This 207-nucleotide RNA was probed chemically with 2A3. For 2A3 the reverse transcriptase was SuperScript II with manganese. The reactions ran in a buffer of 150 mM KOAc, 10 mM MgCl2 and 150 mM bicine (pH 8.5), at 24 C. Source: RMDB library RNAMAK, as collected in RNAgym. For 2A3, 1,431 sequencing reads were counted.
RNA sequence: GGGAACGACUCGAGUAGAGUCGAAAACUCCAACGUUCGCGUUGGAGAAAAAGCGUACUACUUGGGAGAGUUUCACUACCCACCGUAUUCCCAAAUAGGAAUACGAGGUGAUACUCAUCGAUCAAGUAUCGCAAAAACUCUAUCUUCGGAUAGAGAAGCAAUCCCAAGUAUUCGUACUUGGGAUUGCAAAAGAAACAACAACAACAAC
Reactivity to 2A3 in 0.01 (KOAc 150mM, MgCl2 10mM, bicine 150mM(pH8.5), 24C), signal-to-noise 3, nucleotides 027 to 156: c010u000c000c000a000a000c010g020u060u120c300g000c000g150u000u000g020g010a000g000a030a000a000a020a000g010c010g010u080a050c030u000a010c020u070u000g000g040g000a080g000a000g000u000u060u010c000a020c010u100a160c040c040c060a010c020c010g020u000a000u000u020c030c010c030a130a260a190u270a130g000g030a000a000u000a000c000g000a020g010g020u000g000a000u000a040c000u000c030a300u220c160g110a150u080c020a000a010g020u020a040u300c000g000c010a010a010a060a110a090c000u000c000u010a010u010c010u010u060c260g090g000a000u010a000g000a000g000a000a020